[RMDB]
RNA sequence: GGGAACGACUCGAGUAGAGUCGAAAAAGCCGCACUACGGUGCGGCAAUUUGUACAAGAUGCUCUGUUUUGUAAAUAUCAUCAAAUAGAGCAUACUUGUGCAAAGGACUGGAUCUACGGAUCCAGAACUCUUGUAGGCAUUUCGAUGCCUACAAGAGAAAAGAAACAACAACAACAAC
Reactivity to 2A3 in 0.01 (KOAc 150mM, MgCl2 10mM, bicine 150mM(pH8.5), 24C), signal-to-noise 5, nucleotides 027 to 126: a000g000c000c000g000c000a000c000u060a020c250g090g000u000g000c000g000g000c000a000a000u000u000u000g010u010a000c000a000a000g000a000u000g000c000u010c000u000g100u010u020u090u070g090u080a070a200a140u300a140u280c110a020u030c010a010a000a010u010a000g000a000g000c010a010u010a100c000u000u000g000u000g000c000a000a010a010g080g030a010c000u000g000g000a000u000c010u020a050c270g080g000a000u000c000c000a000g000a020a010
Reactivity to DMS in 0.01 (KOAc 150mM, MgCl2 10mM, bicine 150mM(pH8.5), 24C), signal-to-noise 2, nucleotides 027 to 126: a070g020c000c000g000c040a000c010u000a040c170g020g010u000g030c000g050g010c000a000a000u000u000u000g000u000a000c000a000a000g010a020u000g000c000u000c010u010g000u000u000u010u040g010u000a140a090a170u050a160u020c130a090u010c040a010a060a000u000a020g010a000g000c000a010u000a000c030u000u020g000u000g000c000a010a010a010g010g010a210c000u000g000g000a000u000c000u000a230c190g000g000a020u000c000c000a000g000a100a160

The data come from the RNA Mapping Database (RMDB), libraries RFM100 and RFMREP.
Chemical mapping of a 177-nucleotide RNA with 2A3 and DMS.
2A3 adducts were read by reverse transcription with SuperScript II with manganese.
DMS (dimethyl sulfate) methylates the pairing face of unpaired adenines and cytosines.
Conditions: 150 mM KOAc, 10 mM MgCl2 and 150 mM bicine (pH 8.5), 24 C.
For DMS the reverse transcriptase was MarathonRT.